[RMDB]
RNA sequence: GGGAACGACUCGAGUAGAGUCGAAAAUCAGCGUGAGGUGCUGAGCAGCGGGUUUGAGCCGCAGUUUACCGUAACUGGCAUUCCAGUGACAUCCUCGAACUUAAACCAAUGCUACUUUCUGGUAAGAGUUCAGCUUACAGUUCGCUGUAAGCUGAACAAAAGAAACAACAACAACAAC
Reactivity to 2A3 in 0.01 (KOAc 150mM, MgCl2 10mM, bicine 150mM(pH8.5), 24C), signal-to-noise 4, nucleotides 027 to 126: u020c000a000g000c010g040u050g110a040g000g040u100g060c010u020g020a020g030c060a000g010c010g030g030g030u110u190u200g120a050g050c010c010g000c000a000g000u040u080u040a110c030c030g000u030a030a020c000u000g040g000c090a220u300u090c020c010a000g000u020g020a010c010a070u020c000c010u000c010g000a090a060c010u090u080a130a020a020c030c010a080a060u120g050c020u060a100c030u090u110u090c070u090g120g000u090a100a030g050a010
Reactivity to DMS in 0.01 (KOAc 150mM, MgCl2 10mM, bicine 150mM(pH8.5), 24C), signal-to-noise 3, nucleotides 027 to 126: u000c030a040g010c030g010u010g020a130g040g010u010g020c020u010g000a040g020c120a110g030c020g010g010g010u010u040u000g020a110g000c060c030g000c100a050g000u000u000u010a110c190c110g000u010a060a060c100u000g010g020c300a160u000u010c020c050a040g010u010g010a080c080a100u000c080c020u000c030g000a090a070c060u000u000a010a070a060c030c030a040a060u000g010c070u000a040c130u000u000u000c020u010g010g000u010a030a150g000a190